[RMDB]
The record gives the reactivity of an RNA of 177 nucleotides to DMS. Source: RMDB library OK2TST, as collected in RNAgym. DMS (dimethyl sulfate) methylates the pairing face of unpaired adenines and cytosines. The DMS profile rests on 1,178 reads. DMS adducts were read by reverse transcription with MarathonRT.
RNA sequence: GGGAACGACUCGAGUAGAGUCGAAAAUCUGCUAAGGCGCGCGUCCUCGGCCAGUUCGAGCUGCAGGGCAUGGGCGGGCAGGCCGGUUUCGCCGAGCACACCUUCGACCAGCACCAGGAAGCCGGGACGAAAUGGAACUGUUCGCAGUUCCAUUUCGAAAAGAAACAACAACAACAAC
Reactivity to DMS in 0.01 (KOAc 150mM, MgCl2 10mM, bicine 150mM(pH8.5), 24C), signal-to-noise 1, nucleotides 027 to 126: u000c020u010g000c060u000a120a070g000g060c010g020c080g030c200g020u000c020c010u000c040g020g000c010c080a140g010u010u000c140g010a150g020c090u010g000c090a020g020g010g000c020a110u000g000g030g000c000g010g020g010c010a110g000g010c030c000g010g030u000u000u000c060g030c010c030g000a110g000c100a040c120a080c060c030u010u000c120g000a060c080c030a100g050c080a060c050c050a040g000g000a100a090g010c000c010g000g010g030a220